Chemical mapping of a 177-nucleotide RNA with 2A3 and DMS. The reactions ran in a buffer of 150 mM KOAc, 10 mM MgCl2 and 150 mM bicine (pH 8.5), at 24 C. Values are in units of 0.01, from 0 to 300, in steps of 10. For 2A3, 1,433 sequencing reads were counted. The DMS profile rests on 2,925 reads.
RNA sequence: GGGAACGACUCGAGUAGAGUCGAAAAGGAUUCCGUCAGUAACGGCGAGUGAAGACGGAGUAGCCCAAGGUUCAAUCCUGGAUCUCUUCGAGGUCAGGAGAUUUAACCUAAGGACUGGGGGAACUCGCAGAUUAGGGAAGUUCGCUUCCCUAAUCUGAAAAGAAACAACAACAACAAC
Reactivity to 2A3 in 0.01 (KOAc 150mM, MgCl2 10mM, bicine 150mM(pH8.5), 24C), signal-to-noise 1, nucleotides 027 to 126: g080g010a040u050u000c000c000g020u000c000a020g020u060a070a020c020g140g040c090g120a050g000u010g040a050a030g090a000c020g010g000a000g000u000a020g000c020c010c000a040a010g010g000u000u030c030a030a030u040c040c010u070g110g000a030u020c010u010c090u190u260c270g030a000g000g000u010c000a000g000g040a070g000a020u000u020u020a000a000c020c000u010a050a080g060g030a050c120u120g030g020g020g000g000a050a020c010u000c040g060
Reactivity to DMS in 0.01 (KOAc 150mM, MgCl2 10mM, bicine 150mM(pH8.5), 24C), signal-to-noise 3, nucleotides 027 to 126: g010g020a040u010u000c000c000g010u000c010a090g020u000a220a050c080g000g020c100g000a140g020u000g010a200a150g000a030c010g010g000a020g010u010a030g000c000c000c010a130a040g010g010u000u000c150a070a070u000c000c000u020g010g000a010u000c000u000c000u000u000c260g000a020g030g020u000c000a050g000g000a110g000a100u000u010u000a010a020c000c000u010a140a160g010g000a010c020u000g000g000g000g020g010a170a070c040u000c060g010